[RMDB]
RNA sequence: GGGAACGACUCGAGUAGAGUCGAAAAGCCAGGAAGAUUACCAGGUGGGCUUGAAAAACGGGCUGCCCAUUUCAUCUCCAGUCGACGAUGAUGGCGUCUUCACAGAGGAAGCAGGCCCCUUCAAGGGGCCCUUGGCGACGUUCGCGUCGCCAAGGGCAAAAGAAACAACAACAACAAC
Reactivity to 2A3 in 0.01 (KOAc 150mM, MgCl2 10mM, bicine 150mM(pH8.5), 24C), signal-to-noise 1, nucleotides 027 to 126: g020c000c010a010g060g080a000a090g020a110u180u110a090c020c000a030g040g000u030g010g030g000c010u060u090g080a130a030a000a000a000c060g000g020g000c040u030g000c040c000c010a000u060u070u050c040a060u020c000u000c020c070a100g130u150c040g010a080c060g000a050u060g030a030u100g110g010c000g010u060c000u070u030c020a010c010a090g070a030g000g100a020a070g030c060a020g000g120c000c010c000c000u090u150c010a020a020g120g070g060
Reactivity to DMS in 0.01 (KOAc 150mM, MgCl2 10mM, bicine 150mM(pH8.5), 24C), signal-to-noise 2, nucleotides 027 to 126: g020c010c020a120g010g020a090a080g000a130u010u000a080c040c050a120g010g000u000g010g030g010c050u000u030g010a070a060a040a080a070c120g020g020g010c030u000g020c040c010c020a090u000u000u000c060a080u000c050u000c040c050a160g000u000c090g000a060c100g030a040u010g020a090u010g000g040c140g020u000c020u000u010c020a080c130a100g010a090g010g010a080a070g030c080a100g000g010c020c000c000c040u000u010c160a110a060g020g010g010